Chemical mapping of a 177-nucleotide RNA with 2A3 and DMS. For DMS, 2,295 sequencing reads were counted. The reactions ran in a buffer of 150 mM KOAc, 10 mM MgCl2 and 150 mM bicine (pH 8.5), at 24 C. It was measured as part of the RMDB library RFM100. 2A3 adducts were read by reverse transcription with SuperScript II with manganese.
RNA sequence: GGGAACGACUCGAGUAGAGUCGAAAAGCUUCCGGUACAUCGCCUCCCCGCCCGCGCAGGAUCCCUGCGGGCACCCUCCGUCCUCCGGCGAUGUAUCCCGUGACUGGGCGAGCAGACACGGCGCGCGUUACAGGUAACGCUUCGGCGUUACCUGUAAAAAAGAAACAACAACAACAAC
Reactivity to 2A3 in 0.01 (KOAc 150mM, MgCl2 10mM, bicine 150mM(pH8.5), 24C), signal-to-noise 2, nucleotides 027 to 126: g050c070u040u020c010c000g020g010u000a000c000a000u010c000g000c000c000u080c020c030c000c030g000c000c000c000g010c000g020c060a070g050g090a190u080c040c000c020u020g010c000g010g000g010c000a040c020c000c010u090c020c020g060u070c010c000u080c030c020g010g000c000g000a000u000g000u000a020u000c000c000c030g000u000g030a060c000u000g020g020g050c050g030a050g030c010a010g030a040c000a000c020g010g000c000g020c030g000c020g020
Reactivity to DMS in 0.01 (KOAc 150mM, MgCl2 10mM, bicine 150mM(pH8.5), 24C), signal-to-noise 2, nucleotides 027 to 126: g000c110u000u020c000c000g060g020u000a020c010a010u000c000g040c000c000u000c020c010c050c280g030c020c010c060g040c030g000c070a170g000g000a150u020c050c020c000u000g040c050g000g000g020c010a100c080c020c010u020c030c010g000u020c010c050u000c050c040g000g050c000g000a010u010g000u020a040u010c040c010c010g010u000g000a120c030u010g000g010g000c110g020a090g000c010a070g000a110c050a020c060g000g000c020g000c200g000c050g010